[RMDB]
RNA sequence: GGGAACGACUCGAGUAGAGUCGAAAAGAGGCCACGAACAUUAUUCGGAAUCACUGGGCUUAAAGGGUGCGUAGGCGGGCCGCCAAGUGUUCUGUGAAAGCCCCGGGCUCAACCCGGGAACGGCAGGUAUACUCGACAAUUUCGAUUGUCGAGUAUAAAAAGAAACAACAACAACAAC
Reactivity to DMS in 0.01 (KOAc 150mM, MgCl2 10mM, bicine 150mM(pH8.5), 24C), signal-to-noise 6, nucleotides 027 to 126: g010a080g000g020c020c030a090c060g010a060a080c130a120u030u010a060u010u020c040g000g000a120a060u030c060a080c050u000g000g010g010c060u000u020a070a100a100g010g000g020u000g010c030g020u010a120g010g010c030g020g010g010c040c040g010c030c040a050a090g010u010g000u010u000c010u010g010u010g000a090a080a140g000c120c010c000c000g010g010g010c090u030c240a080a260c030c000c020g000g000g000a030a040c090g000g000c090a030g000g010
Reactivity to 2A3 in 0.01 (KOAc 150mM, MgCl2 10mM, bicine 150mM(pH8.5), 24C), signal-to-noise 2, nucleotides 027 to 126: g080a020g030g000c020c000a040c060g030a060a020c040a110u130u180a090u210u160c060g020g060a030a050u070c000a020c060u060g030g010g000c030u100u100a100a060a030g080g030g020u090g010c040g040u040a030g080g040c000g030g010g000c000c010g000c010c010a030a030g030u000g030u060u040c030u010g060u020g080a090a060a020g040c010c000c000c000g000g010g000c070u100c130a100a130c000c000c000g000g030g010a030a020c020g010g000c000a010g020g010
Annotation: An RNA of 177 nucleotides, treated with DMS and 2A3 and read out base by base. 2A3 adducts were read by reverse transcription with SuperScript II with manganese.